[RMDB]
RNA sequence: GGGAACGACUCGAGUAGAGUCGAAAAGUCGCACGAGUGCAGCGACAAGGAAGUCGACUCCGGGGCUUCCAAGUACUCGAAGGAAGGCGAAAGACACCACGUCUUCCAACCGGAGAAGGUGUCAGAAGGGUACGUGCUAGUUCGCUAGUACGUACCCAAAAGAAACAACAACAACAAC
Reactivity to DMS in 0.01 (KOAc 150mM, MgCl2 10mM, bicine 150mM(pH8.5), 24C), signal-to-noise 2, nucleotides 027 to 126: g000u000c020g010c010a110c040g000a050g000u060g020c110a170g000c000g000a040c030a090a140g000g000a000a000g000u000c010g020a110c000u020c000c080g000g000g000g000c000u000u030c000c000a120a060g010u010a060c000u010c070g050a110a150g000g040a010a020g000g000c000g000a120a080a160g000a050c120a020c160c070a300c020g000u000c020u000u000c030c000a010a020c010c000g000g000a030g010a090a080g000g070u010g000u010c050a100g000a150a180
Reactivity to 2A3 in 0.01 (KOAc 150mM, MgCl2 10mM, bicine 150mM(pH8.5), 24C), signal-to-noise 6, nucleotides 027 to 126: g010u000c010g030c030a060c160g140a110g140u270g090c120a040g020c060g020a000c020a000a020g000g010a000a000g010u000c020g000a090c040u000c010c000g000g010g000g000c000u000u000c000c000a010a000g030u010a040c030u030c080g050a050a020g010g000a000a000g000g000c010g080a160a040a060g070a020c030a010c030c010a020c000g000u000c000u000u000c010c000a000a010c000c000g000g030a020g010a030a050g030g000u050g020u040c030a030g040a150a080
This 177-nucleotide RNA was probed chemically with DMS and 2A3. Values cover nucleotides 27 to 126. For 2A3 the reverse transcriptase was SuperScript II with manganese. It was measured as part of the RMDB library OK1LIB. The RNA was probed in 150 mM KOAc, 10 mM MgCl2 and 150 mM bicine (pH 8.5) at 24 C.